Source: RMDB library 15KREP, as collected in RNAgym. Chemical mapping of a 177-nucleotide RNA with 2A3. Values cover nucleotides 27 to 126. The RNA was probed in 150 mM KOAc, 10 mM MgCl2 and 150 mM bicine (pH 8.5) at 24 C. For 2A3 the reverse transcriptase was SuperScript II with manganese.
[RMDB]
RNA sequence: GGGAACGACUCGAGUAGAGUCGAAAACUCAAGGAUUGGAGACUCCAUCUUUACAGGCUGUACUGGCUCUUGGAACAAGGUCACUCAAAUUGCUAACAUGUUCUUGGAACAGACUCAGCAUUCCCUUCCAACGGAAUGAGUUCGCUCAUUCCGUUGGAAAAGAAACAACAACAACAAC
Reactivity to 2A3 in 0.01 (KOAc 150mM, MgCl2 10mM, bicine 150mM(pH8.5), 24C), signal-to-noise 1, nucleotides 027 to 126: c010u010c010a020a000g000g000a000u090u110g060g040a110g140a150c090u030c010c000a020u000c000u020u030u070a080c040a030g080g000c030u020g000u000a030c020u020g030g000c030u000c000u030u000g000g020a020a000c000a100a060g020g020u070c020a040c030u080c040a120a180a130u200u160g000c020u060a010a050c010a070u030g000u010u020c000u020u030g040g000a000a020c000a050g180a300c020u010c090a000g000c000a020u010u000c030c000c000u010u020